[RMDB]
An RNA of 177 nucleotides, treated with DMS and 2A3 and read out base by base. The DMS profile rests on 2,169 reads. For DMS the reverse transcriptase was MarathonRT.
RNA sequence: GGGAACGACUCGAGUAGAGUCGAAAAGGUGUACUUAUCAUGGUAUAGCAUUAAAUGUGAACAUGGAUUUGAGCCCAUUUUUAGGCAUUAACCCAUGUGGUUUUGCUAAAAUGGAAAUGACACAGAAGACCCCUAAAUGAUUCGUCAUUUAGGGGUCAAAAGAAACAACAACAACAAC
Reactivity to DMS in 0.01 (KOAc 150mM, MgCl2 10mM, bicine 150mM(pH8.5), 24C), signal-to-noise 3, nucleotides 027 to 126: g000g020u000g010u000a090c050u000u000a070u000c020a020u000g000g010u000a160u010a260g000c010a050u000u010a080a120a250u000g050u000g000a130a090c000a010u000g030g010a090u000u000u000g000a130g020c140c000c040a030u000u010u010u000u000a090g010g020c010a010u000u000a010a020c020c000c000a140u000g020u000g000g000u000u000u000u000g010c020u000a030a020a040a030u000g000g010a060a070a100u000g020a080c010a000c010a150g010a140a150
Reactivity to 2A3 in 0.01 (KOAc 150mM, MgCl2 10mM, bicine 150mM(pH8.5), 24C), signal-to-noise 2, nucleotides 027 to 126: g060g000u050g000u050a050c000u030u080a090u120c010a000u040g010g020u120a040u080a130g000c020a010u000u300a140a280a160u140g010u040g030a020a030c010a040u000g090g000a050u080u000u100g060a060g010c050c000c010a020u070u020u000u030u120a070g000g000c000a030u080u030a010a010c000c000c010a080u180g000u300g000g020u010u040u000u000g000c000u030a000a000a010a010u010g010g010a000a020a100u090g000a020c000a010c000a030g130a230a010
The data come from the RNA Mapping Database (RMDB), library OK2TST. The RNA was probed in 150 mM KOAc, 10 mM MgCl2 and 150 mM bicine (pH 8.5) at 24 C.